[RMDB]
RNA sequence: GGGAACGACUCGAGUAGAGUCGAAAAGAAGUUGUAAACAAGUACUUCGAAAUCUAUGACGGUGGUUGUCUUAAUGCUUCUGAAGUGGUUGUUAAUAAUUUAGACAAGAGUGCUGGCCAUCCUUUUAGUUAACUACAAAGUUCGCUUUGUAGUUAACAAAAGAAACAACAACAACAAC
Reactivity to DMS in 0.01 (KOAc 150mM, MgCl2 10mM, bicine 150mM(pH8.5), 24C), signal-to-noise 4, nucleotides 027 to 126: g020a040a070g010u000u000g000u000a110a060a060c060a050a060g010u000a020c010u000u000c010g010a030a070a080u010c070u010a050u010g010a100c100g030g030u000g020g020u010u010g010u000c030u000u000a060a080u000g010c120u020u000c020u010g010a050a040g010u000g010g010u000u000g010u000u000a070a040u010a060a050u010u000u000a100g000a070c070a050a080g010a080g010u000g010c030u000g020g000c020c030a080u000c040c010u000u000u000u000a110
Reactivity to 2A3 in 0.01 (KOAc 150mM, MgCl2 10mM, bicine 150mM(pH8.5), 24C), signal-to-noise 1, nucleotides 027 to 126: g040a040a010g010u090u080g060u210a030a050a030c030a040a030g140u040a000c000u000u040c040g020a040a020a070u000c040u090a090u160g040a020c000g060g060u080g030g060u130u100g010u060c000u000u040a080a060u140g020c000u050u000c010u060g000a060a020g030u050g030g040u030u040g030u040u000a030a010u060a110a030u080u050u090a030g010a000c000a060a030g020a000g080u030g010c000u030g000g040c010c000a010u010c010c000u000u020u020u040a010